[RMDB]
RNA sequence: GGGAACGACUCGAGUAGAGUCGAAAAAGACGGUAGAGGUGCAGCCUGGUCAGCCAUCUUUCACCUUUGCUGAUGUUGCUAUCCAGGUGUUUUCCAUUGCAUGUGCAUGAAGCCCUAUGCUUUGUUUAGGCGCCAACUGUUAGUAUCGUAACACAUAAUAUUACCUCCUAUUCGUAGGAGGUAAUAUAAAAGAAACAACAACAACAAC
Reactivity to 2A3 in 0.01 (KOAc 150mM, MgCl2 10mM, bicine 150mM(pH8.5), 24C), signal-to-noise 8, nucleotides 027 to 156: a010g060a010c040g010g030u070a050g020a060g090g000u020g010c010a010g020c010c010u020g010g010u050c070a000g000c010c000a020u020c020u050u200u140c130a160c060c060u170u150u240g070c090u040g000a020u020g030u130u150g000c010u010a040u070c000c010a010g000g010u030g030u050u090u060u010c040c010a020u030u020g000c020a010u040g020u030g050c040a050u140g170a130a040g010c020c020c020u080a030u030g020c000u070u040u010g060u060u110u070a070g050g000c010g020c010c020a030a030c030u020g040u100u040a070g030u040a070u120c110g050u100a110a010c090a010c100a120u240a160
Reactivity to DMS in 0.01 (KOAc 150mM, MgCl2 10mM, bicine 150mM(pH8.5), 24C), signal-to-noise 5, nucleotides 027 to 156: a090g000a080c030g020g010u000a070g020a120g030g040u010g010c100a280g000c020c020u020g030g020u000c100a150g040c030c040a070u000c030u010u010u000c050a080c070c080u000u010u010g040c090u020g000a090u000g020u000u010g020c010u000a110u000c050c020a060g020g020u010g010u000u010u010u000c120c040a110u000u000g020c030a050u010g030u010g020c030a080u000g000a140a190g020c020c030c040u000a070u000g010c050u000u000u000g030u000u000u000a080g010g010c020g010c030c010a060a120c070u000g010u000u010a070g010u000a090u000c070g020u000a050a130c040a040c050a070u000a130